[RMDB]
RNA sequence: GGGAACGACUCGAGUAGAGUCGAAAAGCUAAGCAGUCAGCGAUCGAAGCAGCGGCCGCCUGUGCCGCUGCCGAGAAACGGGAGCAGCAGGCAGAGAGCGCGCGGCAGUGCAGCGACGCGGCACAGGACCUAUGCAUCGAUUCGUCGAUGCAUAGGUAAAAGAAACAACAACAACAAC
Reactivity to 2A3 in 0.01 (KOAc 150mM, MgCl2 10mM, bicine 150mM(pH8.5), 24C), signal-to-noise 4, nucleotides 027 to 126: g070c060u070a070a020g020c020a030g070u130c050a000g020c030g070a080u040c020g020a060a010g020c010a000g000c010g030g000c020c000g060c020c080u140g060u170g020c010c000g000c010u010g000c000c000g020a020g030a020a100a030c040g010g040g010a070g020c030a000g010c030a020g040g000c010a010g040a000g020a000g100c030g000c020g000c000g050g000c010a040g050u040g100c020a010g000c000g020a040c040g000c010g020g000c010a010c020a060g030g080
Reactivity to DMS in 0.01 (KOAc 150mM, MgCl2 10mM, bicine 150mM(pH8.5), 24C), signal-to-noise 3, nucleotides 027 to 126: g030c030u020a070a050g020c040a120g020u000c000a120g020c040g020a150u000c010g000a210a160g010c020a020g030c000g010g030c000c030g010c130c080u040g000u050g010c000c000g000c000u010g010c000c000g000a280g020a030a120a140c180g020g030g000a140g000c020a070g000c060a040g020g000c050a050g000a120g000a070g030c000g000c070g010c050g000g000c020a110g010u010g010c020a080g010c050g000a070c070g000c030g030g000c030a050c060a070g000g000
Structure probing data (2A3 and DMS) for a 177-nucleotide construct. As a SHAPE reagent, 2A3 marks flexible, mostly unpaired nucleotides at the ribose 2'-OH. The DMS profile rests on 5,727 reads. For 2A3, 6,031 sequencing reads were counted.